Structure probing data (2A3 and DMS) for a 177-nucleotide construct. Source: RMDB library OK2TRN, as collected in RNAgym. Values cover nucleotides 27 to 126. For DMS the reverse transcriptase was MarathonRT. The 2A3 profile rests on 10,019 reads. The DMS profile rests on 6,163 reads. Reactivities are rounded to 0.1 and cut off at 0 and 3.

RNA sequence: GGGAACGACUCGAGUAGAGUCGAAAACGCGGUGGAAUCGGCGAUCACCGAUGGCCAGGGCGAUAUGAAGGCCAUUGGCGGCUACAUCGUCGGCGCCCUGGUGAUCCUGGCCGUCGCCGGCCUGAUCCGUCUACCUAAUGUUCGCAUUAGGUAGACGAAAAGAAACAACAACAACAAC
Reactivity to 2A3 in 0.01 (KOAc 150mM, MgCl2 10mM, bicine 150mM(pH8.5), 24C), signal-to-noise 5, nucleotides 027 to 126: c050g000c020g010g010u050g030g080a110a140u190c010g020g010c050g010a010u030c010a000c010c010g030a080u100g020g000c010c000a050g080g010g000c010g010a010u020a070u220g180a170a090g040g000c000c020a030u090u250g270g050c100g010g010c020u050a030c030a090u060c020g070u000c020g080g040c060g000c000c000c010u030g000g000u000g000a000u010c000c040u040g040g000c030c030g010u010c000g000c020c000g020g020c010c000u050g030a050u050c040
Reactivity to DMS in 0.01 (KOAc 150mM, MgCl2 10mM, bicine 150mM(pH8.5), 24C), signal-to-noise 5, nucleotides 027 to 126: c180g020c040g000g030u000g010g020a090a070u010c030g010g020c050g010a040u010c100a030c020c010g010a050u010g010g000c000c020a200g010g010g010c020g010a060u010a070u010g010a120a170g000g000c010c030a170u000u010g020g020c160g010g000c050u000a170c150a050u000c050g030u010c080g000g010c120g010c020c000c140u000g010g010u000g010a020u010c000c080u000g010g000c020c080g000u000c020g010c050c020g000g010c070c010u000g010a070u010c080